[RMDB]
This 207-nucleotide RNA was probed chemically with 2A3. Reactivities are given for positions 27 through 156. The RNA was probed in 150 mM KOAc, 10 mM MgCl2 and 150 mM bicine (pH 8.5) at 24 C.
RNA sequence: GGGAACGACUCGAGUAGAGUCGAAAAACACGGAUACGCUCGCUUAGGUUCAUAACUCUAUGGUGAGCAGAUGGUUAGCCAUUGCCCACCGCCUGGCUGUCGAUUGCAGCGAAUGCGGCCUUGCAACCCGGCUUCCGGCACCGCUGACGCGCAGUGAAUCCUUCUGGUGGUUCGCCACCAGAAGGAUAAAAGAAACAACAACAACAAC
Reactivity to 2A3 in 0.01 (KOAc 150mM, MgCl2 10mM, bicine 150mM(pH8.5), 24C), signal-to-noise 1, nucleotides 027 to 156: a000c050a030c050g040g020a040u080a140c040g000c030u050c040g050c010u140u120a020g000g020u100u100c130a130u210a230a220c070u040c050u160a080u200g020g030u000g000a020g000c000a000g040a000u070g040g000u150u070a010g030c010c000a000u000u030g000c020c050c000a030c000c010g000c000c000u040g010g000c000u000g020u100c050g110a120u200u150g020c070a050g000c000g070a120a030u040g040c000g010g000c040c000u010u050g000c000a030a060c070c050c000g020g000c000u070u000c060c030g040g000c010a030c060c010g000c000u000g060a110c020g000c010g030c010a000g010u050g050a110